This 207-nucleotide RNA was probed chemically with 2A3.
RNA sequence: GGGAACGACUCGAGUAGAGUCGAAAAGGGGUCUCAUGGGAGGUACAUGUGGGACAUGAGCUGAAGCCUCCACGGCUCAACAGCCCGAAUACCGACGAUCAUGAGACGGAGGCACCCAAAACCUCCUAAAAUUCCGUUCGCGGAAUUUUAGGAGGAAGUGUGAAGCUAACUUCGGUUAGCUUCACACAAAAGAAACAACAACAACAAC
Reactivity to 2A3 in 0.01 (KOAc 150mM, MgCl2 10mM, bicine 150mM(pH8.5), 24C), signal-to-noise 1, nucleotides 027 to 156: g080g020g040g040u000c000u000c000a000u000g000g010g010a000g000g000u050a060c080a290u300g120u300g110g030g040a080c080a160u100g000a010g000c000u020g010a060a000g010c020c000u030c020c000a020c000g020g000c000u040c000a050a050c020a050g090c010c000c010g170a200a080u120a110c000c010g100a210c020g000a110u030c000a000u010g000a000g000a000c010g000g000a000g000g020c010a050c010c010c010a020a160a040a070c000c010u000c000c000u010a000a000a000a000u000u000c010c040g040u050u090c280g010c000g100g000a000a000u000u000u000u000a000g000g000a000g000g000a000a040
2A3 adducts were read by reverse transcription with SuperScript II with manganese. Values cover nucleotides 27 to 156.